The record gives the reactivity of an RNA of 207 nucleotides to DMS and 2A3. Conditions: 150 mM KOAc, 10 mM MgCl2 and 150 mM bicine (pH 8.5), 24 C. Values are in units of 0.01, from 0 to 300, in steps of 10. The DMS profile rests on 4,803 reads.
[RMDB]
RNA sequence: GGGAACGACUCGAGUAGAGUCGAAAAAUCACGGCGGGUCACGGCCUCGCCGUAGAAGGAGCGGGACUCACCCUGAAACUGCAGGCGCAGGGACCGUUACAACUCAACGAUCAGGGACUGAGCUUAAACGCGGCUGACCCGUUCUCGGUCAACGAUCCAUAUUUUAAGUCUUCGGACUUAAAAUAUGAAAAGAAACAACAACAACAAC
Reactivity to DMS in 0.01 (KOAc 150mM, MgCl2 10mM, bicine 150mM(pH8.5), 24C), signal-to-noise 2, nucleotides 027 to 156: a070u000c040a060c040g000g030c000g030g010g030u000c060a120c180g040g010c060c000u010c020g020c040c010g020u000a020g020a110a120g000g000a070g010c000g010g010g020a230c000u000c020a070c010c000c000u010g010a150a090a100c070u000g010c030a090g050g020c160g030c010a070g010g010g020a050c060c020g030u000u000a130c070a100a220c050u000c040a050a030c030g000a090u020c020a150g020g030g020a120c110u010g010a050g030c080u000u000a070a060a100c050g010c000g020g010c020u000g010a120c040c000c040g000u000u000c060u000c050g020g000u000c010a030a060c050g030a200u000c020
Reactivity to 2A3 in 0.01 (KOAc 150mM, MgCl2 10mM, bicine 150mM(pH8.5), 24C), signal-to-noise 6, nucleotides 027 to 156: a000u060c030a010c010g010g010c000g020g000g010u030c050a050c190g130g010c030c010u090c050g000c000c000g000u010a040g020a050a070g060g050a030g010c020g010g020g080a130c020u010c030a060c000c010c000u020g030a100a050a030c040u120g020c040a110g150g070c090g020c150a070g020g030g030a050c020c000g010u060u090a060c080a190a080c080u090c170a050a060c040g030a040u020c020a040g040g000g050a050c100u060g000a010g000c010u110u170a060a060a020c060g010c020g050g040c080u080g090a130c000c000c000g010u060u020c040u030c010g010g020u040c050a070a040c100g010a020u030c020